[RMDB]
RNA sequence: GGGAACGACUCGAGUAGAGUCGAAAAUUAAAGCACGCGAAGCACGCGAAGCACAUGAAGCACAUGAAGCACUACAAGCAGUACAAGCACGGCAAGCAGUAGAAGCUGUACAAGCAGCCGAAAAAAAUCACAUUCUUGUAUUCGUACAAGAAUGUGAAAAAGAAACAACAACAACAAC
Reactivity to DMS in 0.01 (KOAc 150mM, MgCl2 10mM, bicine 150mM(pH8.5), 24C), signal-to-noise 3, nucleotides 027 to 126: u010u010a070a110a070g000c030a090c080g010c040g020a100a140g030c070a040c110g030c100g000a060a080g000c020a060c140a040u000g020a020a120g020c040a060c040a040u000g010a110a070g030c030a050c060u000a050c090a030a050g040c030a050g020u000a030c090a070a100g020c010a070c120g000g010c060a040a080g000c070a060g010u000a050g010a060a090g000c020u000g020u000a060c160a090a100g000c040a050g010c010c050g000a010a010a050a050a060a090a060
Reactivity to 2A3 in 0.01 (KOAc 150mM, MgCl2 10mM, bicine 150mM(pH8.5), 24C), signal-to-noise 2, nucleotides 027 to 126: u070u030a100a030a030g020c000a020c090g060c020g060a100a000g060c060a020c080g060c010g050a060a000g050c020a030c020a070u050g060a060a020g020c050a020c010a130u050g040a040a020g020c020a000c030u040a020c020a100a000g010c020a000g030u030a060c020a100a000g010c030a010c040g000g000c040a030a010g000c010a010g000u080a030g040a070a000g030c000u020g000u030a060c030a090a040g000c000a000g030c010c000g060a120a010a010a000a010a000a020